[RMDB]
RNA sequence: GGGAACGACUCGAGUAGAGUCGAAAACAAGUUAGUGCUUGCGACUUACACGUAGGGCGAGGGGUGGGCGAAAGUUGCCAUGAGACCGUAACUUUCGUAGUCAUUGAUAAAGGGGCAGGUCUCGCUCAAAACCUCCCGUGGUUCGCCACGGGAGGAAGCUAAUGUCCAUGUUCGCAUGGACAUUAGCAAAAGAAACAACAACAACAAC
Reactivity to 2A3 in 0.01 (KOAc 150mM, MgCl2 10mM, bicine 150mM(pH8.5), 24C), signal-to-noise 3, nucleotides 027 to 156: c030a010a040g080u130u100a030g020u080g140c060u080u070g050c040g050a070c030u090u130a050c130a000c080g080u080a090g020g030g030c110g070a130g000g010g050g070u210g010g000g020c000g020a000a000a000g000u010u000g020c030c030a110u180g040a000g000a020c000c000g000u000a000a000c000u020u010u010c040g000u010a030g080u010c040a070u060u150g050a030u120a070a070a020g020g000g010g010c060a020g000g000u000c000u000c000g010c020u130c040a060a130a070a090c000c000u000c000c030c000g000u000g020g000u020u040c160g000c050c000a000c000g000g000g000a000g000g000a000a000
The record gives the reactivity of an RNA of 207 nucleotides to 2A3. 2A3 adducts were read by reverse transcription with SuperScript II with manganese.